[RMDB]
RNA sequence: GGGAACGACUCGAGUAGAGUCGAAAAAGCGUCGACGAACCUUCCAACCUUCCAAAGCAGCAAAAGCUGAACCUUCCAACCUUCCAAUCUACUCGAGAGGAGGAGCAGGAGGAGGAGGAGGAAUUAAACUGGUAAGGUGAUUCGUCACCUUACCAGUAAAAGAAACAACAACAACAAC
Reactivity to DMS in 0.01 (KOAc 150mM, MgCl2 10mM, bicine 150mM(pH8.5), 24C), signal-to-noise 2, nucleotides 027 to 126: a080g010c070g000u000c060g050a020c110g010a050a140c080c030u000u000c030c040a170a190c010c010u030u020c000c050a110a110a050g010c010a030g000c020a150a070a080a130g000c000u000g000a100a170c010c000u000u000c000c010a180a270c070c000u000u020c000c000a020a230u000c010u000a090c220u000c070g000a020g020a300g000g000a040g000g000a050g000c300a060g010g000a030g000g010a130g010g000a040g000g000a120g010g000a210a070u000u000a020a070
Reactivity to 2A3 in 0.01 (KOAc 150mM, MgCl2 10mM, bicine 150mM(pH8.5), 24C), signal-to-noise 2, nucleotides 027 to 126: a010g020c010g060u060c020g040a100c020g020a110a110c000c010u020u040c010c060a180a160c040c010u080u000c010c020a150a050a020g050c000a030g010c000a010a300a160a090g000c000u030g020a060a060c000c000u060u000c010c020a060a030c010c010u140u000c010c010a010a060u010c020u070a130c050u090c180g030a020g010a000g020g000a010g000g000a010g020c060a030g010g030a050g010g020a040g030g000a030g000g000a000g000g000a020a030u090u100a090a170

The record gives the reactivity of an RNA of 177 nucleotides to DMS and 2A3. In probing experiments dimethyl sulfate is read out at A N1 and C N3, which are open when not base-paired. The data come from the RNA Mapping Database (RMDB), library M2PK90. For DMS, 1,195 sequencing reads were counted. The reactions ran in a buffer of 150 mM KOAc, 10 mM MgCl2 and 150 mM bicine (pH 8.5), at 24 C. 2A3 adducts were read by reverse transcription with SuperScript II with manganese.